[RMDB]
RNA sequence: GGGAACGACUCGAGUAGAGUCGAAAACAUGUGGCGUGGCAUCCCUGGACAUCUGAGAGAACUGCUUUCAUAAAGCCCGGCCCAGCUCGCCGUGGAACUCUGUACGGCAGUGGAAGUGACGCAACAACCCUAGUGUUGUGGUCGGGAGAGCAACACACUCCUUUUAAUGAUUCGUCAUUAAAAGGAGAAAAGAAACAACAACAACAAC
Reactivity to DMS in 0.01 (KOAc 150mM, MgCl2 10mM, bicine 150mM(pH8.5), 24C), signal-to-noise 3, nucleotides 027 to 156: c040a080u010g030u000g020g000c060g020u010g020g020c050a110u000c010c000c010u000g010g000a070c050a090u000c060u010g000a130g020a140g000a030a100c070u000g020c040u000u000u010c080a110u010a090a100a140g020c020c020c010g020g040c010c040c010a220g010c040u000c090g040c020c020g000u000g010g000a070a080c060u010c060u000g040u000a060c040g010g010c020a070g020u000g010g020a090a110g020u000g000a160c040g000c050a060a050c040a040a110c030c020c040u020a100g010u000g040u010u020g010u010g020g010u000c000g020g000g000a090g020a090g020c040a040a050c040a080c090a180
Reactivity to 2A3 in 0.01 (KOAc 150mM, MgCl2 10mM, bicine 150mM(pH8.5), 24C), signal-to-noise 6, nucleotides 027 to 156: c070a070u120g020u040g070g010c030g040u030g020g000c020a060u080c030c010c000u020g030g020a060c040a110u070c090u090g040a030g000a000g010a110a040c050u060g030c030u090u130u120c070a080u140a140a100a040g010c000c000c000g010g000c000c010c010a020g020c020u080c070g020c010c010g000u050g020g040a100a100c050u070c050u150g060u160a020c000g000g000c010a030g020u050g030g020a070a050g040u050g100a030c050g000c040a010a040c010a020a010c030c010c030u070a060g030u020g010u110u010g030u040g020g020u020c030g010g030g000a050g020a010g020c010a040a040c010a000c000a010